The record gives the reactivity of an RNA of 207 nucleotides to DMS and 2A3.
For DMS the reverse transcriptase was MarathonRT.
For DMS, 2,947 sequencing reads were counted.
Source: RMDB library OK3TST, as collected in RNAgym.
2A3 is a SHAPE reagent: it acylates the 2'-hydroxyl of flexible nucleotides of all four kinds.
The 2A3 profile rests on 1,873 reads.
The reactions ran in a buffer of 150 mM KOAc, 10 mM MgCl2 and 150 mM bicine (pH 8.5), at 24 C.
For 2A3 the reverse transcriptase was SuperScript II with manganese.
[RMDB]
RNA sequence: GGGAACGACUCGAGUAGAGUCGAAAAUGGUCAUGUAGCAGUCAAGGUAGUUUAAGCAUUCAGGAAUUGCAUCUGUUUUGAUGCCUAAUGAGGGAAUAGUUCAUGAGUGUAGGACGUCUUCGGAUGAGACUAAUAUACAGAUGGGUAUCUCUAUUGGCACAACGAGGUAGUUCGCUACCUCGUUGUGAAAAGAAACAACAACAACAAC
Reactivity to DMS in 0.01 (KOAc 150mM, MgCl2 10mM, bicine 150mM(pH8.5), 24C), signal-to-noise 2, nucleotides 027 to 156: u000g020g030u000c040a130u020g050u000a100g020c030a060g040u010c030a060a060g000g070u000a150g040u000u000u000a090a170g000c030a140u010u050c020a080g000g000a070a050u000u010g000c030a080u010c060u020g020u000u010u000u010g030a080u000g000c030c080u010a070a150u020g040a090g090g010g020a090a090u000a080g000u000u020c040a070u000g010a200g040u000g020u000a100g000g000a100c160g000u000c030u080u000c040g000g010a170u000g010a060g010a040c040u000a080a120u000a090u000a120c050a100g030a070u010g000g010g000u000a100u020c010u000c040u000a140u000u000g000g060
Reactivity to 2A3 in 0.01 (KOAc 150mM, MgCl2 10mM, bicine 150mM(pH8.5), 24C), signal-to-noise 4, nucleotides 027 to 156: u100g000g000u040c050a040u020g010u040a020g040c050a020g050u040c040a080a030g040g000u020a050g040u050u100u090a100a020g000c080a070u030u060c040a030g090g060a070a070u130u110g000c020a010u020c040u000g240u090u190u090u170g030a020u040g000c000c010u100a140a060u100g050a050g030g010g020a070a030u060a080g050u000u070c030a030u080g040a010g040u020g000u040a010g000g040a000c030g010u000c010u020u060c090g090g030a120u140g010a020g000a000c000u020a030a080u040a030u010a070c000a020g070a050u060g010g010g040u040a050u000c040u000c020u010a080u070u120g030g000